[RMDB]
Overview:
An RNA of 177 nucleotides, treated with DMS and 2A3 and read out base by base. As a SHAPE reagent, 2A3 marks flexible, mostly unpaired nucleotides at the ribose 2'-OH. The RNA was probed in 150 mM KOAc, 10 mM MgCl2 and 150 mM bicine (pH 8.5) at 24 C. Source: RMDB library OK1LIB, as collected in RNAgym.
RNA sequence: GGGAACGACUCGAGUAGAGUCGAAAAGACGAUUAGGAAACCCUGCAGAAUUCGAUGGCACACCUAAUCGUAACCUGAGGAAACAGGAAUAAAAACAAUCUGCCAUCCAAAAAGCGCAGUAAAGAAAGAUUUAUACGUCGUUCGCGACGUAUAAAUCAAAAGAAACAACAACAACAAC
Reactivity to DMS in 0.01 (KOAc 150mM, MgCl2 10mM, bicine 150mM(pH8.5), 24C), signal-to-noise 2, nucleotides 027 to 126: g030a010c000g020a000u000u000a000g000g010a130a110a130c220c000c070u000g040c050a190g010a170a150u110u030c090g000a060u010g000g000c020a090c260a250c000c030u000a020a000u020c030g030u000a110a050c000c000u000g000a050g000g000a120a100a140c000a000g000g000a070a120u020a040a150a050a120a110c100a130a060u000c060u000g030c000c000a040u060c000c240a080a000a140a020a110g000c180g030c010a010g060u060a050a050a010g030a070a100a100
Reactivity to 2A3 in 0.01 (KOAc 150mM, MgCl2 10mM, bicine 150mM(pH8.5), 24C), signal-to-noise 4, nucleotides 027 to 126: g130a010c000g000a010u000u000a010g030g030a120a160a060c020c020c020u030g050c080a080g100a200a150u200u240c070g030a030u070g020g000c020a040c000a000c040c000u010a000a000u000c000g000u000a000a020c000c000u010g060a100g050g210a110a040a000c010a010g040g060a110a040u150a130a060a040a000a000c020a000a050u010c010u020g000c000c000a040u060c050c020a030a080a020a110a050g020c070g010c060a030g060u130a110a150a000g140a040a080a010